[RMDB]
RNA sequence: GGGAACGACUCGAGUAGAGUCGAAAACGUAGCGCGCUAGCGCGCAUCGGCCGCGAUAUCGUACGAUCGUAUAGCUAUAUAUAAUGCUACGAUAUAUUACGCGCGAUCGGCAUGCAUAUAUGCAUCGGACCACUAGGCAUUUCGAUGCCUAGUGGUCAAAAGAAACAACAACAACAAC
Reactivity to DMS in 0.01 (KOAc 150mM, MgCl2 10mM, bicine 150mM(pH8.5), 24C), signal-to-noise 2, nucleotides 027 to 126: c000g030u020a170g030c000g020c010g000c180u010a080g000c020g030c040g040c020a070u000c050g030g000c090c010g050c040g010a040u020a010u030c040g020u010a100c160g000a030u000c160g030u000a080u000a010g040c120u010a050u000a040u010a040u000a080a070u000g020c130u000a010c010g020a040u000a020u000a110u020u020a150c110g010c000g000c000g000a070u010c030g030g000c200a000u000g020c050a070u020a110u000a030u000g020c000a050u020c240g030
Reactivity to 2A3 in 0.01 (KOAc 150mM, MgCl2 10mM, bicine 150mM(pH8.5), 24C), signal-to-noise 2, nucleotides 027 to 126: c050g040u100a010g010c010g000c020g030c120u130a080g030c000g060c000g000c080a050u070c020g060g010c040c000g000c010g040a030u050a040u150c030g000u060a040c040g040a070u040c000g000u080a080u060a190g000c080u040a030u010a010u010a000u020a300a140u160g040c030u030a020c020g000a000u000a010u000a000u040u160a050c040g000c000g030c000g020a020u030c030g040g010c000a010u020g020c010a020u200a010u030a060u290g000c020a020u090c050g100
Source: RMDB library OK2TRN, as collected in RNAgym. Structure probing data (DMS and 2A3) for a 177-nucleotide construct. DMS adducts were read by reverse transcription with MarathonRT. 2A3 adducts were read by reverse transcription with SuperScript II with manganese. Reactivities are rounded to 0.1 and cut off at 0 and 3. The DMS profile rests on 1,471 reads. Values cover nucleotides 27 to 126.